[RMDB]
RNA sequence: GGGAACGACUCGAGUAGAGUCGAAAAUACCUAUGAUCCUAGGUACGGAUCCUAGCGCAGUCUCGUACGGCCGCGUACUGAUCCUCGGCGCGCUCUGCGCCGCGUCAGGCCUCGUAUAGGUACGCGCAUCGAUUGGAGAUUUCGAUCUCCAAUCGAUAAAAGAAACAACAACAACAAC
Reactivity to 2A3 in 0.01 (KOAc 150mM, MgCl2 10mM, bicine 150mM(pH8.5), 24C), signal-to-noise 2, nucleotides 027 to 126: u050a030c020c000u030a060u140g100a100u100c010c060u040a040g110g040u040a040c050g050g010a020u000c010c020u080a050g000c010g000c030a020g020u020c060u070c250g050u130a130c050g100g030c120c060g000c030g010u050a160c010u020g000a070u050c020c000u050c100g010g010c000g000c010g010c070u050c060u140g000c010g000c010c000g000c000g000u010c010a010g020g000c000c030u100c040g060u160a100u080a150g000g030u010a030c010g020c010g040c040
Reactivity to DMS in 0.01 (KOAc 150mM, MgCl2 10mM, bicine 150mM(pH8.5), 24C), signal-to-noise 4, nucleotides 027 to 126: u010a030c010c000u000a020u000g010a150u020c190c170u000a030g000g020u000a030c060g010g020a110u010c000c050u000a060g000c000g010c000a050g010u000c180u000c130g010u020a060c190g020g030c150c100g000c090g000u000a060c030u000g000a090u010c020c050u000c100g020g000c000g000c010g000c180u000c080u010g020c020g010c030c000g020c210g020u000c030a020g000g020c170c100u000c070g020u010a100u000a090g000g000u000a020c040g010c000g030c110
Description: The record gives the reactivity of an RNA of 177 nucleotides to 2A3 and DMS. 2A3 adducts were read by reverse transcription with SuperScript II with manganese. In probing experiments dimethyl sulfate is read out at A N1 and C N3, which are open when not base-paired. Reactivities are rounded to 0.1 and cut off at 0 and 3. The RNA was probed in 150 mM KOAc, 10 mM MgCl2 and 150 mM bicine (pH 8.5) at 24 C. For DMS the reverse transcriptase was MarathonRT.